[RMDB]
RNA sequence: GGGAACGACUCGAGUAGAGUCGAAAAGGCCAUCGACCAGCGCGGGUAUGGCCGCUCGUCGAAAUACCGGGUGCAAAAGGCCUACCGCAUCAAGGAAUUGGUUGGCGACGUCGUGGGCGUCCUCGACUCUUGUCUGCUCAUUCGUGAGCAGACAAGAAAAAGAAACAACAACAACAAC
Reactivity to DMS in 0.01 (KOAc 150mM, MgCl2 10mM, bicine 150mM(pH8.5), 24C), signal-to-noise 2, nucleotides 027 to 126: g000g030c010c010a070u020c120g000a070c010c080a180g020c060g030c030g010g000g030u000a040u020g010g010c020c000g070c020u000c060g020u000c030g010a090a090a120u010a120c170c010g010g000g030u000g000c140a090a040a050a200g020g020c000c000u000a030c030c050g040c050a030u000c110a110a030g000g030a180a130u010u010g010g010u000u010g020g000c040g010a060c080g050u010c050g020u000g010g010g010c020g000u000c020c020u000c080g040a100c080
Reactivity to 2A3 in 0.01 (KOAc 150mM, MgCl2 10mM, bicine 150mM(pH8.5), 24C), signal-to-noise 1, nucleotides 027 to 126: g030g090c000c000a020u120c080g080a080c020c010a030g000c000g030c060g100g020g020u250a110u140g060g000c020c010g000c000u010c000g100u030c050g030a110a100a000u200a090c010c030g000g050g010u080g000c070a120a050a130a000g030g030c000c000u000a030c010c020g000c010a030u070c060a060a030g080g010a100a190u100u040g080g000u040u090g070g030c010g000a040c010g000u000c030g100u090g080g080g040c000g070u080c010c030u000c010g130a080c030
Chemical mapping of a 177-nucleotide RNA with DMS and 2A3. It was measured as part of the RMDB library OK2TST.